RNA sequence: GGGAACGACUCGAGUAGAGUCGAAAACAAAAGCAAGGUGGGGAGAGCCAUCCCUUCUGCCACCACUAACUCUGUUUCCACGGGCUUUUGGGCCCGUAUGUUCAUGGCCGUCUGCCUUUCACAGGUGUUUGCAGAAAAAAUGGGCCUGGAGACAGGCCUGAGUCUCAGUGUUCGCACUGAGACUCAGAAAAGAAACAACAACAACAAC
Reactivity to 2A3 in 0.01 (KOAc 150mM, MgCl2 10mM, bicine 150mM(pH8.5), 24C), signal-to-noise 1, nucleotides 027 to 156: c000a000a140a000a010g080c040a000a090g040g040u030g000g060g020g010a040g040a000g090c040c000a050u010c050c000c000u060u030c030u040g060c010c030a060c000c000a020c050u080a060a080c010u030c030u110g040u000u020u030c040c040a030c030g010g000g030c000u230u160u300u250g210g070g010c050c040c010g000u020a060u110g020u060u090c090a060u090g020g020c030c000g050u030c050u070g000c020c020u130u240u160c100a110c060a100g060g030u040g080u100u050u090g000c010a020g020a090a090a000a010a010a040u070g020g020g020c000c010u000g030g010a020g000a010c000a000g000g030c000
Structure probing data (2A3) for a 207-nucleotide construct.
The RNA was probed in 150 mM KOAc, 10 mM MgCl2 and 150 mM bicine (pH 8.5) at 24 C.
Values cover nucleotides 27 to 156.
It was measured as part of the RMDB library OK3TST.
For 2A3 the reverse transcriptase was SuperScript II with manganese.